[RMDB]
RNA sequence: GGGAACGACUCGAGUAGAGUCGAAAAGUAGCUCGUUUCGACGAGCUACAAAAAAGCGUACUACUAGCGAGGAUCAAUGAAUGGGAGUCCCAAAUAGGACUUUGAUCAUUAUUGGGAGCUAGUAUCGCAAAAAGUGGAUAAAUUCGUUUAUCCACAAACUUGAGACUGUUUUCGAACAGUCUCAAGUAAAAGAAACAACAACAACAAC
Reactivity to 2A3 in 0.01 (KOAc 150mM, MgCl2 10mM, bicine 150mM(pH8.5), 24C), signal-to-noise 3, nucleotides 027 to 156: g010u000a000g000c010u000c000g010u010u110u100c210g100a020c010g000a000g010c000u000a000c000a000a000a010a000a010a000g050c070g020u130a100c060u010a000c000u000a010g020c000g050a250g050g010a010u010c000a000a020u060g190a090a020u020g050g000g010a030g010u010c020c030c060a130a230a230u290a070g000g040a010c030u090u090u080g060a080u170c030a010u000u020a000u020u000g000g010g000a020g020c010u000a000g000u010a010u080c000g000c000a000a030a000a030a160g000u000g000g010a010u010a020a020a030u090u070c130g050u060u020u000a000u000c000c000a000c000a000a070
Reactivity to DMS in 0.01 (KOAc 150mM, MgCl2 10mM, bicine 150mM(pH8.5), 24C), signal-to-noise 2, nucleotides 027 to 156: g020u000a020g020c000u000c000g020u000u000u000c300g030a100c010g010a000g010c010u000a000c010a000a030a060a050a110a110g030c020g040u000a060c190u000a000c010u010a010g020c000g010a280g040g010a130u000c030a040a040u010g000a050a040u000g010g010g000a050g010u080c000c000c000a010a060a150u000a050g020g020a020c010u010u000u010g000a060u010c030a030u000u000a040u000u000g010g010g010a220g030c000u000a010g000u000a030u000c010g000c020a060a040a040a120a140g020u010g000g000a030u000a010a020a110u010u000c280g010u010u000u010a030u000c000c000a000c000a020a030